[RMDB]
RNA sequence: GGGAACGACUCGAGUAGAGUCGAAAAGAUAUGGAUAAACAGCAACAGCCGUGAGGUCGGAAACGACCUACGGACAUGCUGUGUCCUAAGUCAAAGAGCAAGAACGGCUUCGGCCGUUCUUGCUCAAGUUCCUUAUCCAGUUCGCUGGAUAAGGAACAAAAGAAACAACAACAACAAC
Reactivity to DMS in 0.01 (KOAc 150mM, MgCl2 10mM, bicine 150mM(pH8.5), 24C), signal-to-noise 2, nucleotides 027 to 126: g010a070u010a270u000g010g000a020u000a070a120a100c010a010g000c000a020a080c240a160g000c010c000g000u010g000a020g030g000u000c020g000g000a070a080a150c010g020a020c000c010u010a010c000g000g010a060c110a090u000g000c000u000g030u000g000u000c000c000u000a050a070g000u010c010a060a120a120g010a010g000c000a020a010g010a010a020c020g000g020c020u000u020c250g030g010c020c000g000u000u000c010u000u000g010c020u010c000a020a050
Chemical mapping of a 177-nucleotide RNA with DMS.
The reactions ran in a buffer of 150 mM KOAc, 10 mM MgCl2 and 150 mM bicine (pH 8.5), at 24 C.
Reactivities are given for positions 27 through 126.
Source: RMDB library TTRDEL, as collected in RNAgym.